[RMDB]
RNA sequence: GGGAACGACUCGAGUAGAGUCGAAAACGGAGCAAAGACGACCACGCCCGUGCUUGGCCCUUUCUCACAUCUCGAUGUCGGGGGAGGCGUCUACAACGUAGUGCAGGCUGCCCGCGACAAGGAAGGCGAGGGCGGUAGCAUUCGUGCUACCGCCCUCAAAAGAAACAACAACAACAAC
Reactivity to 2A3 in 0.01 (KOAc 150mM, MgCl2 10mM, bicine 150mM(pH8.5), 24C), signal-to-noise 2, nucleotides 027 to 126: c030g020g000a180g060c030a000a000a080g080a040c040g020a010c000c010a050c100g010c010c000c030g020u010g000c030u060u090g090g010c000c000c000u020u080u000c020u030c000a040c030a210u010c050u080c050g160a090u030g030u010c000g000g080g000g040g000a010g050g060c000g060u000c000u020a030c000a280a030c180g100u120a050g030u010g210c060a070g100g110c000u130g060c000c000c000g120c000g030a000c000a000a160g130g000a040a060g060g090c120